The data come from the RNA Mapping Database (RMDB), libraries RFM100 and RFMREP. Chemical mapping of a 177-nucleotide RNA with DMS and 2A3.
RNA sequence: GGGAACGACUCGAGUAGAGUCGAAAAUGCUGCAUAAGACACCAAGGGUGGGGCUGUUCGCCCAUUAAAAGGGAUCCUGAGAUGGGUUCACUACGUCGCGAGACAGUAGGGUUGCUUCUCUGUGGGACUGUAUUGAAUAGUUCGCUAUUCAAUACAGAAAAGAAACAACAACAACAAC
Reactivity to DMS in 0.01 (KOAc 150mM, MgCl2 10mM, bicine 150mM(pH8.5), 24C), signal-to-noise 9, nucleotides 027 to 126: u010g010c020u000g010c050a060u000a070a090g000a110c090a080c050c040a080a090g000g000g030u010g010g000g000g000c050u000g010u010u010c130g010c000c000c010a050u010u020a030a070a100a080g010g010g000a090u010c020c020u000g000a170g000a050u000g000g000g000u000u010c060a100c020u000a030c030g010u000c020g000c210g010a200g000a020c020a060g020u000a030g000g010g000u000u010g000c040u010u000c040u000c030u000g010u010g010g000g010a280
Reactivity to 2A3 in 0.01 (KOAc 150mM, MgCl2 10mM, bicine 150mM(pH8.5), 24C), signal-to-noise 9, nucleotides 027 to 126: u050g020c010u010g010c020a030u050a130a050g060a040c030a030c060c030a040a050g060g010g020u080g010g030g010g010c030u040g060u090u070c050g040c020c000c020a030u090u180a060a100a020a020g050g020g020a040u050c010c020u060g010a040g010a060u080g010g040g000u050u050c010a030c050u050a020c020g040u050c010g000c030g030a030g010a040c050a060g020u040a020g020g040g010u050u080g010c020u040u020c020u000c010u040g060u100g030g010g040a040
Overview:
For DMS the reverse transcriptase was MarathonRT.